[RMDB]
RNA sequence: GGGAACGACUCGAGUAGAGUCGAAAAUGCUCGGGGCACGGGUACUCGGCGAUGGUGCGGAGUGCCAGGUCCUGGGCGGCUUGCGUCGGCGCCUGGUCCUUGAUCAUGGCCAGCAGGCUCUCGGCUGUGAAUGAAAGAUCUUCGGAUCUUUCAUUCAAAAAGAAACAACAACAACAAC
Reactivity to DMS in 0.01 (KOAc 150mM, MgCl2 10mM, bicine 150mM(pH8.5), 24C), signal-to-noise 4, nucleotides 027 to 126: u000g020c000u000c010g010g020g010g010c030a070c080g000g020g020u000a000c010u000c000g010g020c000g010a180u010g010g020u020g020c010g020g000a030g010u000g000c000c000a070g000g000u000c010c000u000g000g010g010c000g000g000c030u000u000g010c020g010u010c270g010g010c150g020c070c020u000g010g010u000c010c220u010u020g000a020u000c030a040u010g020g000c000c010a120g000c030a020g000g000c000u010c010u000c020g020g010c160u010g010
Reactivity to 2A3 in 0.01 (KOAc 150mM, MgCl2 10mM, bicine 150mM(pH8.5), 24C), signal-to-noise 3, nucleotides 027 to 126: u060g010c000u000c010g000g000g000g000c050a060c220g040g010g000u010a000c000u010c030g200g010c040g070a240u300g130g170u300g070c030g110g020a000g010u000g000c000c000a000g000g010u000c000c000u010g010g020g000c000g000g000c010u000u020g010c010g110u090c130g120g030c160g090c080c030u010g000g000u030c050c090u080u280g000a020u020c020a060u170g000g000c000c000a000g000c020a000g000g020c000u010c010u000c010g110g000c100u160g040